[RMDB]
RNA sequence: GGGAACGACUCGAGUAGAGUCGAAAAGUACCCUUGUUCGCAAGGGUACAAAGACAGACUUCACUGUGAUAAAGAAGGUAACAUCUCAGUUACAAUAAGAGAAAAGCACCUACUUCGGUAGGUGCAAGAUUUCAUCCUGGUUCGCCAGGAUGAAAUCAAAAGAAACAACAACAACAAC
Reactivity to DMS in 0.01 (KOAc 150mM, MgCl2 10mM, bicine 150mM(pH8.5), 24C), signal-to-noise 1, nucleotides 027 to 126: g050u000a020c000c000c000u010u000g010u010u000c190g030c010a000a010g030g000g020u000a000c050a010a100a070g030a000c010a030g020a240c020u000u000c000a020c010u010g010u030g040a130u020a010a020a030g020a030a000g020g010u000a020a010c000a130u020c070u000c130a130g000u000u020a000c030a070a100u020a130a100g000a070g000a020a080a160a210g000c000a000c000c000u000a000c000u010u020c170g030g000u000a000g000g000u000g000c020a000a010
Reactivity to 2A3 in 0.01 (KOAc 150mM, MgCl2 10mM, bicine 150mM(pH8.5), 24C), signal-to-noise 1, nucleotides 027 to 126: g010u010a010c000c010c010u010u000g020u030u050c110g010c100a000a010g030g010g000u020a020c000a000a000a010g030a000c010a000g000a020c000u040u020c060a010c020u020g040u070g110a200u160a180a100a040g010a030a030g100g020u000a000a010c020a050u090c040u010c130a030g030u030u040a010c050a090a100u180a160a050g140a000g000a030a190a000a000g000c000a000c000c000u010a010c000u000u010c120g030g000u020a000g000g000u000g000c000a000a000